The record gives the reactivity of an RNA of 177 nucleotides to DMS and 2A3. DMS adducts were read by reverse transcription with MarathonRT.

RNA sequence: GGGAACGACUCGAGUAGAGUCGAAAACUCGUUAACAUGGAUGUUUUCAGGCAAAAAAUUCAAACUUUCGUCGCGUUACUUGCGCGACUUUGAAUGUGCGGGAUUGCUGAAAAGCAGCCCGUUUUUUCUUCAUAUAAUCAUUCGUGAUUAUAUGAAGAAAAGAAACAACAACAACAAC
Reactivity to DMS in 0.01 (KOAc 150mM, MgCl2 10mM, bicine 150mM(pH8.5), 24C), signal-to-noise 2, nucleotides 027 to 126: c010u000c020g010u030u000a050a200c140a090u000g030g000a120u030g000u000u000u000u010c080a130g010g000c180a000a040a080a080a080a020u000u000c000a030a040a050c300u000u030u010c180g020u010c000g000c000g000u010u010a090c300u030u020g010c020g030c000g020a000c020u000u000u000g000a040a010u000g010u000g010c030g000g000g000a040u000u000g000c010u000g000a110a050a080a010g030c000a030g020c010c000c030g010u000u010u000u000u000u000
Reactivity to 2A3 in 0.01 (KOAc 150mM, MgCl2 10mM, bicine 150mM(pH8.5), 24C), signal-to-noise 7, nucleotides 027 to 126: c010u020c010g050u080u080a070a060c050a120u150g090g030a100u090g090u030u030u060u070c040a030g130g040c130a060a050a030a040a050a070u050u040c030a040a050a100c090u140u230u200c110g000u000c000g000c010g010u030u120a200c100u250u280g000c000g000c000g000a000c000u000u000u000g010a010a010u050g020u050g040c000g020g000g080a200u100u050g000c000u000g030a040a050a030a010g000c000a000g010c010c000c000g000u050u000u010u000u000u000